[RMDB]
RNA sequence: GGGAACGACUCGAGUAGAGUCGAAAACGACGCUUCGGCGUCGAAAAAAGAUAUGGAGUCGAUGAAGGCUCAACAGCCCAUCAGGAGUCGGAAACGACUCCUGAGUGGGACAUGAGCCUGUCGACUCCUAAGUCAAAAACCAGGUUUCGACCUGGAAGUCGAUAAGGUAGUUCGCUACCUUAUCGACAAAAGAAACAACAACAACAAC
Reactivity to 2A3 in 0.01 (KOAc 150mM, MgCl2 10mM, bicine 150mM(pH8.5), 24C), signal-to-noise 1, nucleotides 027 to 156: c060g010a000c000g000c000u030u020c300g230g000c000g040u020c010g020a010a000a000a000a000a000g100a030u100a040u210g000g010a000g000u030c010g000a020u080g260a180a070g000g000c000u010c000a000a030c040a050g010c000c000c000a000u020c000a000g020g000a000g010u000c020g000g000a060a070a120c010g000a000c010u060c000c000u020g000a000g010u000g000g000g010a010c050a100u030g000a000g000c030c000u000g000u000c000g000a000c000u000c000c000u000a000a000g020u000c050a110a000a000a000a050c010c010a010g020g050u050u080u250c290g060a050c020c000u010g010g000a010a020